[RMDB]
RNA sequence: GGGAACGACUCGAGUAGAGUCGAAAAACAGAGUUGGAUGGGGUUUUGACAAUUCUAGUACCCCACUAGACCCAAGUUUCACUUUUUCACAUACCAUCACCUUCAGCAUCAUCUGUACAUAUUCUUGUUUUCCUUCAUCUGCUCUGCAUCGCACACACGUACGCUGCGAUUUCGAUCGCAGCGUACGAAAAGAAACAACAACAACAAC
Reactivity to 2A3 in 0.01 (KOAc 150mM, MgCl2 10mM, bicine 150mM(pH8.5), 24C), signal-to-noise 1, nucleotides 027 to 156: a020c030a040g060a000g010u080u150g100g060a090u040g000g000g060g070u100u020u110u230g150a130c120a080a120u080u000c020u040a030g010u040a050c000c000c000c000a000c000u000a000g060a010c000c000c000a040a050g000u000u100u160c080a060c030u060u070u000u160u180c170a120c010a040u130a020c050c000a050u050c050a090c010c000u020u020c000a040g040c000a140u030c000a000u050c020u030g060u030a040c020a070u100a030u100u090c100u060u030g120u000u080u060u050c000c000u020u090c000a100u000c010u000g060c000u000c000u060g000c020a080u090c010g050c050a050c070a110c040a020
This 207-nucleotide RNA was probed chemically with 2A3. For 2A3, 589 sequencing reads were counted. The data come from the RNA Mapping Database (RMDB), library OK3TST.